Source: RMDB library OK3TST, as collected in RNAgym. This 207-nucleotide RNA was probed chemically with 2A3 and DMS. Values cover nucleotides 27 to 156. As a SHAPE reagent, 2A3 marks flexible, mostly unpaired nucleotides at the ribose 2'-OH. The DMS profile rests on 2,427 reads.

[RMDB]
RNA sequence: GGGAACGACUCGAGUAGAGUCGAAAAUCACGUGGUCGGCGGAAGUUGGCGGUAUAUAAUGCUGGAUUCAAUCUAGCACUCUGCGUGUGCGCGGUAUACGUCGGAAUUUCUGUUUCCACGUAUAUCCGGUUUCUCUGGUGAUAGCAAAUAUACGUAGUCACAAAAUCCCAUUCGUGGGAUUUUGUGAAAAAGAAACAACAACAACAAC
Reactivity to 2A3 in 0.01 (KOAc 150mM, MgCl2 10mM, bicine 150mM(pH8.5), 24C), signal-to-noise 2, nucleotides 027 to 156: u060c030a000c060g010u010g020g010u070c030g010g010c020g020g050a060a050g060u040u050g030g010c040g060g030u020a050u000a010u040a100a110u050g020c020u030g020g000a070u150u170c140a040a160u010c040u010a000g010c000a020c040u070c050u010g010c020g010u020g010u010g000c050g030c080g030g000u000a000u000a000c030g000u020c130g000g040a010a010u220u220u040c110u070g130u010u050u000c020c000a000c010g000u000a000u010a010u030c000c000g000g000u030u130u040c040u000c020u020g040g000u050g020a050u040a040g010c020a000a130a030u130a000u010a070c010g000u000a040g030
Reactivity to DMS in 0.01 (KOAc 150mM, MgCl2 10mM, bicine 150mM(pH8.5), 24C), signal-to-noise 1, nucleotides 027 to 156: u010c040a050c080g040u000g050g000u010c020g040g020c050g010g050a080a300g020u000u000g040g010c000g020g050u010a070u000a030u000a060a050u000g030c020u000g090g000a040u000u010c250a030a300u000c020u000a080g000c020a020c040u000c010u000g010c030g060u010g010u000g020c000g000c010g050g030u000a000u000a030c030g040u000c050g000g000a050a050u000u000u000c150u030g010u000u000u020c010c020a020c000g000u010a010u000a000u000c000c030g020g020u000u000u000c060u010c040u010g010g020u000g000a110u010a090g000c040a040a060a080u000a110u000a000c080g040u010a060g010